[RMDB]
RNA sequence: GGGAACGACUCGAGUAGAGUCGAAAACGUGAACAUCGCUCUGCUAAGUCCCGUCGUUCUUCCAGUCAGAGCGAGAUUGUAAGCAACCUUAUGCGCAAUGAAGACAUAGAGGGACUUCUGAAUGAAGCAUACUCAUUACCUUCGGGUAAUGAGUAUGAAAAGAAACAACAACAACAAC
Reactivity to 2A3 in 0.01 (KOAc 150mM, MgCl2 10mM, bicine 150mM(pH8.5), 24C), signal-to-noise 9, nucleotides 027 to 126: c070g110u120g110a050a010c020a110u010c010g000c000u010c000u020g050c030u070a070a020g050u070c020c030c020g070u050c020g010u050u010c000u100u010c030c000a060g100u140c010a000g010a010g010c040g010a010g010a030u050u080g040u080a080a050g000c010a030a100c020c040u120u120a050u120g030c050g000c040a030a090u170g040a120a040g030a030c030a040u140a020g150a050g030g020g010a020c000u050u010c050u090g300a280a210u140g010a040a000g010
Reactivity to DMS in 0.01 (KOAc 150mM, MgCl2 10mM, bicine 150mM(pH8.5), 24C), signal-to-noise 9, nucleotides 027 to 126: c170g010u020g010a120a110c130a110u000c010g000c010u000c000u010g010c140u020a080a060g000u010c040c040c040g000u010c030g020u000u000c000u010u020c030c080a080g010u030c020a010g000a020g020c010g000a020g000a060u010u010g010u000a100a140g010c080a070a130c110c060u010u020a040u010g010c050g010c080a070a070u020g020a100a090g000a090c060a050u020a050g010a070g000g000g000a090c010u000u000c080u010g010a110a070u030g010a080a070g010
The record gives the reactivity of an RNA of 177 nucleotides to 2A3 and DMS. Source: RMDB library OK1LIB, as collected in RNAgym. For 2A3, 23,916 sequencing reads were counted. For 2A3 the reverse transcriptase was SuperScript II with manganese. The reactions ran in a buffer of 150 mM KOAc, 10 mM MgCl2 and 150 mM bicine (pH 8.5), at 24 C.